Chemical mapping of a 207-nucleotide RNA with DMS and 2A3. Source: RMDB library OK3TST, as collected in RNAgym. The reactions ran in a buffer of 150 mM KOAc, 10 mM MgCl2 and 150 mM bicine (pH 8.5), at 24 C. DMS adducts were read by reverse transcription with MarathonRT.

RNA sequence: GGGAACGACUCGAGUAGAGUCGAAAACAUAAUUCCUUUGAUGGCUGAUAGUGUCAGAGCACAAGAUUUCCAAUCUUUGACAAUUUUUAGCACCAUUAUCUUUGUUUUGAUAUCUAUAUCAGACAGCAUGGUGCGUCUGACAACACAGGGAUUAAGAUAAACGGAUGUGUUUCGACACAUCCGUUUAAAAAGAAACAACAACAACAAC
Reactivity to DMS in 0.01 (KOAc 150mM, MgCl2 10mM, bicine 150mM(pH8.5), 24C), signal-to-noise 1, nucleotides 027 to 156: c030a140u000a040a060u000u010c000c000u000u000u000g010a100u000g000g020c040u020g000a110u000a100g030u000g020u000c000a050g020a010g000c070a150c030a040a040g000a170u010u000u000c030c040a030a150u000c010u010u000u010g000a000c010a050a090u010u000u010u000u000a160g020c030a030c020c000a030u000u000a060u000c080u000u000u000g030u000u010u020u000g030a080u000a060u000c130u010a150u000a040u000c010a040g000a020c000a040g070c170a060u000g000g030u000g010c010g000u000c020u000g010a080c020a030a080c030a040c060a060g010g020g000a030u000u000a020a090g000a260
Reactivity to 2A3 in 0.01 (KOAc 150mM, MgCl2 10mM, bicine 150mM(pH8.5), 24C), signal-to-noise 2, nucleotides 027 to 156: c000a020u100a070a020u110u000c010c000u060u010u090g080a110u030g020g060c070u040g080a170u110a160g080u020g000u000c010a010g000a010g000c050a040c100a080a070g060a130u100u100u140c060c050a020a020u000c020u000u010u020g060a040c030a050a100u050u110u000u110u170a040g000c000a000c000c000a030u110u010a050u230c100u170u180u110g010u040u040u090u020g010a000u010a010u010c090u040a210u030a000u220c000a000g010a000c000a000g060c010a000u010g040g000u010g000c000g000u010c010u000g020a020c010a040a030c020a000c000a020g000g000g000a000u010u040a100a050g090a170